Source: RMDB library OK2TRN, as collected in RNAgym. This 177-nucleotide RNA was probed chemically with DMS and 2A3. For 2A3 the reverse transcriptase was SuperScript II with manganese. The 2A3 profile rests on 1,971 reads. For DMS, 2,868 sequencing reads were counted. Conditions: 150 mM KOAc, 10 mM MgCl2 and 150 mM bicine (pH 8.5), 24 C.

RNA sequence: GGGAACGACUCGAGUAGAGUCGAAAAGAGAGGUGCCAUUUCCCAGCUUCUGCAGCAGCUGUGACCUCGAAGGUCUCAUUCUUGAUGCUGCAGGUAGAGGCCAGCUGGGCCUGCAGAGAGCUGCCUCACGUCGUGUUCUUUUCGAAGAACACGACGUAAAAGAAACAACAACAACAAC
Reactivity to DMS in 0.01 (KOAc 150mM, MgCl2 10mM, bicine 150mM(pH8.5), 24C), signal-to-noise 3, nucleotides 027 to 126: g010a140g000a040g020g000u000g040c140c100a160u000u010u000c000c090c000a200g010c010u000u010c010u010g010c030a010g000c010a020g010c060u010g010u000g000a120c000c020u000c060g000a210a190g000g000u000c070u010c000a070u000u020c170u020u000g020a060u010g000c090u000g020c060a010g000g010u000a060g000a020g000g000c020c020a040g020c010u010g010g000g010c300c000u000g000c010a050g000a100g000a060g020c050u000g020c010c020u000c030
Reactivity to 2A3 in 0.01 (KOAc 150mM, MgCl2 10mM, bicine 150mM(pH8.5), 24C), signal-to-noise 2, nucleotides 027 to 126: g120a000g000a010g010g030u060g080c130c040a150u020u020u000c020c030c010a000g020c000u040u000c000u010g000c000a090g000c000a010g000c000u050g070u210g250a300c010c010u000c020g040a090a050g050g030u000c010u000c040a070u230u100c090u190u190g030a030u050g050c090u060g010c000a000g020g010u000a010g000a000g000g000c020c020a000g000c030u030g000g100g000c000c020u000g010c050a010g020a010g010a010g020c050u100g000c000c010u010c020